Conditions: 150 mM KOAc, 10 mM MgCl2 and 150 mM bicine (pH 8.5), 24 C. This 170-nucleotide RNA was probed chemically with DMS and 2A3. 2A3 adducts were read by reverse transcription with SuperScript II with manganese. The DMS profile rests on 6,389 reads.
RNA sequence: GGGAACGACUCGAGUAGAGUCGAAAAUUGAAGGUAAAACAGCCUGUGGGUGAAACACAACCACAGGGCCCAUUGGGCGCUAGCACUCUGGUAUCACGGUACCUUUGUGCGCCUGUUUUACCGAAGGGACGCGGAUCCUUCGGGAUCCGCAAAAGAAACAACAACAACAAC
Reactivity to DMS in 0.01 (KOAc 150mM, MgCl2 10mM, bicine 150mM(pH8.5), 24C), signal-to-noise 2, nucleotides 027 to 129: u020u040g010a120a120g050g000u000a000a000a060a010c030a040g000c060c000u030g000u040g140g070g000u050g000a030a110a050c300a060c110a110a000c000c000a000c000a000g020g000g010c020c010c000a040u000u000g000g000g010c030g030c020u030a030g080c020a000c000u020c000u030g000g010u010a030u070c000a080c210g030g000u020a020c020c000u000u050u000g020u070g010c000g010c000c000u050g020u000u000u000u000a020c010c000g020a060a080g000g010g070a000c140
Reactivity to 2A3 in 0.01 (KOAc 150mM, MgCl2 10mM, bicine 150mM(pH8.5), 24C), signal-to-noise 2, nucleotides 027 to 129: u120u120g080a030a000g000g000u000a000a000a000a000c000a000g020c030c010u000g010u000g010g000g010u140g020a030a120a000c100a020c010a030a000c000c000a000c000a010g040g000g000c000c000c000a010u200u300g010g040g000c000g000c050u090a010g000c000a000c000u000c020u020g020g000u030a010u010c040a020c200g160g040u020a040c000c010u000u010u000g000u000g010c000g000c000c000u000g000u000u000u000u000a000c000c000g000a000a000g020g020g010a030c070